[RMDB]
RNA sequence: GGGAACGACUCGAGUAGAGUCGAAAAGCAUGAGUGGCCAAGUGUUACUAGAACUUGACCUUAGUGAUAGCCACAUAUCACACGCCGGGUUGGGCAAGCAGUGUCGAAACAGCCCAAUCCGCAGUGCCAUCAUGGACUCAUUCGUGAGUCCAUGAUGAAAAGAAACAACAACAACAAC
Reactivity to 2A3 in 0.01 (KOAc 150mM, MgCl2 10mM, bicine 150mM(pH8.5), 24C), signal-to-noise 9, nucleotides 027 to 126: g050c040a020u090g060a020g150u120g030g000c010c010a030a020g010u030g080u240u190a160c130u100a100g120a220a020c010u020u040g040a050c010c000u030u090a040g010u000g040a030u030a030g090c050c020a120c030a080u080a020u050c030a010c020a010c050g090c060c020g000g010g000u000u000g010g000g010c060a110a040g050c070a120g050u110g080u300c120g150a120a110a060c020a030g010c000c000c000a000a010u010c000c000g000c000a010g010u020g040c020
Reactivity to DMS in 0.01 (KOAc 150mM, MgCl2 10mM, bicine 150mM(pH8.5), 24C), signal-to-noise 5, nucleotides 027 to 126: g010c050a070u020g010a080g000u010g010g030c030c000a000a010g020u000g000u030u020a110c180u010a090g020a140a030c000u000u010g000a080c010c000u010u020a110g020u000g000a040u000a060g000c060c090a080c120a090u010a050u010c030a040c000a170c100g010c180c020g020g010g010u000u000g000g020g000c000a110a140g010c130a080g000u020g020u050c120g010a130a110a100c180a180g000c000c000c000a030a000u000c000c010g020c040a040g010u000g000c100

The data come from the RNA Mapping Database (RMDB), library OK1LIB. Structure probing data (2A3 and DMS) for a 177-nucleotide construct. Reactivities are rounded to 0.1 and cut off at 0 and 3. The RNA was probed in 150 mM KOAc, 10 mM MgCl2 and 150 mM bicine (pH 8.5) at 24 C. DMS adducts were read by reverse transcription with MarathonRT.